This 177-nucleotide RNA was probed chemically with 2A3 and DMS.
[RMDB]
RNA sequence: GGGAACGACUCGAGUAGAGUCGAAAAGAUAUGGACCGUUCCAGUAACAAGGAGCAACAGCUCGGAAACGAGACAUGCUCCCGCCCUGGACGGUCCUAAGUCAAAGAGUAACGUUCGCGUUACUCAAGUUCACCAAUUAGUUCGCUAAUUGGUGAACAAAAGAAACAACAACAACAAC
Reactivity to 2A3 in 0.01 (KOAc 150mM, MgCl2 10mM, bicine 150mM(pH8.5), 24C), signal-to-noise 5, nucleotides 027 to 126: g020a010u070a020u130g010g010a000c000c020g070u300u110c000c030a010g030u090a130a160c160a180a160g000g000a000g010c010a020a120c030a160g080c010u010c010g010g020a070a050a040c000g000a010g040a030c030a070u090g000c000u000c010c000c020g050c010c010c020u010g010g000a000c000g010g000u000c000c000u000a000a000g020u000c020a020a050a100g010a000g010u000a000a030c020g010u060u090c300g030c010g100u010u000a010c000u000c000a000a010
Reactivity to DMS in 0.01 (KOAc 150mM, MgCl2 10mM, bicine 150mM(pH8.5), 24C), signal-to-noise 5, nucleotides 027 to 126: g020a030u000a300u010g000g000a000c000c000g010u000u000c000c010a010g010u010a070a100c220a210a080g010g000a020g000c000a030a080c250a160g000c000u000c000g000g000a050a050a190c000g000a010g010a070c110a160u010g000c000u000c000c000c030g000c300c160c000u000g000g000a030c000g010g010u000c000c010u010a000a070g000u010c050a090a110a150g000a010g000u000a000a000c000g030u000u000c200g000c010g000u000u000a000c000u000c000a040a070
For 2A3 the reverse transcriptase was SuperScript II with manganese.
The 2A3 profile rests on 14,115 reads.